RNA sequence: GGGAACGACUCGAGUAGAGUCGAAAAACAGGGAGGCGGUAUGUGAGGAUGAUGGUCCUGUGGAUAAUUUUGAGGCAUUGUUUGAGCAGAGUACCCAGGGAUCCUUCCUAGAUAAUGAUGAGGUGGACUCCCAUGACUGAUUCGUCAGUCAUGGGAGAAAAGAAACAACAACAACAAC
Reactivity to 2A3 in 0.01 (KOAc 150mM, MgCl2 10mM, bicine 150mM(pH8.5), 24C), signal-to-noise 1, nucleotides 027 to 126: a000c030a010g010g030g030a030g050g000c040g040g020u080a050u100g100u030g090a040g050g030a030u070g000a090u090g040g050u010c000c010u030g070u150g090g050a090u050a190a140u090u020u020u130g020a080g050g010c050a040u000u080g120u240u100u080g030a010g000c030a000g030a010g070u080a040c010c020c020a000g040g000g000a020u000c000c010u050u080c030c000u040a050g030a140u120a080a070u120g040a020u100g000a000g000g040u080g050g000a010
Reactivity to DMS in 0.01 (KOAc 150mM, MgCl2 10mM, bicine 150mM(pH8.5), 24C), signal-to-noise 2, nucleotides 027 to 126: a080c090a100g000g010g010a060g000g020c080g010g020u000a050u000g010u000g000a040g010g000a070u010g030a140u000g030g000u000c000c000u010g020u040g020g010a070u010a030a040u000u000u010u000g010a080g020g020c030a060u000u010g000u000u000u000g020a150g010c040a050g000a100g010u000a060c050c010c030a130g000g000g010a050u000c030c030u000u000c010c010u000a050g020a110u000a050a030u000g010a130u010g010a080g010g010u000g000g000a230
This 177-nucleotide RNA was probed chemically with 2A3 and DMS. The data come from the RNA Mapping Database (RMDB), library OK2TST. For DMS the reverse transcriptase was MarathonRT. For 2A3, 936 sequencing reads were counted. For 2A3 the reverse transcriptase was SuperScript II with manganese. The DMS profile rests on 2,660 reads.